The data come from the RNA Mapping Database (RMDB), library OK2TST. Structure probing data (2A3 and DMS) for a 177-nucleotide construct. Reactivities are given for positions 27 through 126.
[RMDB]
RNA sequence: GGGAACGACUCGAGUAGAGUCGAAAACUGGCCUGCGGCGUUGAGUGCGCCGAUGUCGCGCAAUGUAUCCACGGCCUGCUCCCAUGAUUGCUUCGGGGGCGUGCUCAGCAGCGGAAACUGGGCGGGAACACACAAUAACAUUCGUGUUAUUGUGUGUAAAAGAAACAACAACAACAAC
Reactivity to 2A3 in 0.01 (KOAc 150mM, MgCl2 10mM, bicine 150mM(pH8.5), 24C), signal-to-noise 8, nucleotides 027 to 126: c020u020g050g020c000c020u060g030c040g050g000c020g020u030u070g070a060g090u110g010c010g000c010c020g080a080u120g070u080c030g000c010g010c060a050a090u120g040u110a100u050c040c020a020c040g030g000c000c010u020g010c010u020c010c010c010a020u120g080a110u060u240g020c070u080u080c070g000g010g000g000g000c020g020u040g000c000u020c010a030g000c020a030g060c030g040g040a060a070a050c020u030g000g010g010c020g020g010g010a020
Reactivity to DMS in 0.01 (KOAc 150mM, MgCl2 10mM, bicine 150mM(pH8.5), 24C), signal-to-noise 9, nucleotides 027 to 126: c060u000g010g010c020c020u010g030c040g010g010c080g010u000u000g000a110g030u000g010c010g010c020c070g020a120u010g020u000c060g010c140g010c050a060a060u010g010u000a120u010c050c030a080c110g000g000c020c020u000g010c080u000c010c000c020a120u010g010a100u010u010g010c100u000u000c070g020g000g000g010g010c050g010u000g000c020u010c030a040g010c050a110g020c090g000g000a060a090a100c050u000g000g000g010c030g000g000g010a160
For 2A3, 39,636 sequencing reads were counted. Conditions: 150 mM KOAc, 10 mM MgCl2 and 150 mM bicine (pH 8.5), 24 C.